RNA sequence: GGGAACGACUCGAGUAGAGUCGAAAAGAAGGAUAGUUCGCUAUCCUUCAAACCCACCGAAAGGCAAAUGUGUUAGAUGCCCUCUAACACUUAAACCGGGCAAAACAGUACCGUUCGCGGUACUGAACCACUGAUAGUACUUCGGUACUAUCAGUGGAAAAGAAACAACAACAACAAC
Reactivity to DMS in 0.01 (KOAc 150mM, MgCl2 10mM, bicine 150mM(pH8.5), 24C), signal-to-noise 3, nucleotides 027 to 126: g000a020a010g030g010a010u000a000g010u020u010c280g010c000u000a010u000c000c010u000u010c010a040a100a110c010c000c000a160c160c070g000a050a060a090g000g010c080a080a200a040u010g010u000g010u010u000a000g000a070u010g010c240c230c100u000c010u000a000a020c010a000c020u000u020a050a150a170c040c020g000g000g020c210a050a060a100a130c010a000g020u000a000c000c000g010u000u020c170g010c000g030g000u000a000c000u000g000a040a110
Reactivity to 2A3 in 0.01 (KOAc 150mM, MgCl2 10mM, bicine 150mM(pH8.5), 24C), signal-to-noise 3, nucleotides 027 to 126: g000a010a000g010g000a000u000a000g010u030u040c060g010c090u000a010u010c000c000u000u000c000a000a000a010c010c000c000a020c020c020g150a180a060a020g050g010c060a070a090a150u120g000u000g000u000u010a000g000a050u290g050c030c060c000u000c000u010a000a010c000a000c000u020u030a040a020a010c010c020g010g050g020c070a020a030a050a080c010a010g000u000a000c000c010g010u040u090c280g000c020g110g000u020a000c000u000g010a010a020
An RNA of 177 nucleotides, treated with DMS and 2A3 and read out base by base. The reactions ran in a buffer of 150 mM KOAc, 10 mM MgCl2 and 150 mM bicine (pH 8.5), at 24 C. The 2A3 profile rests on 7,187 reads.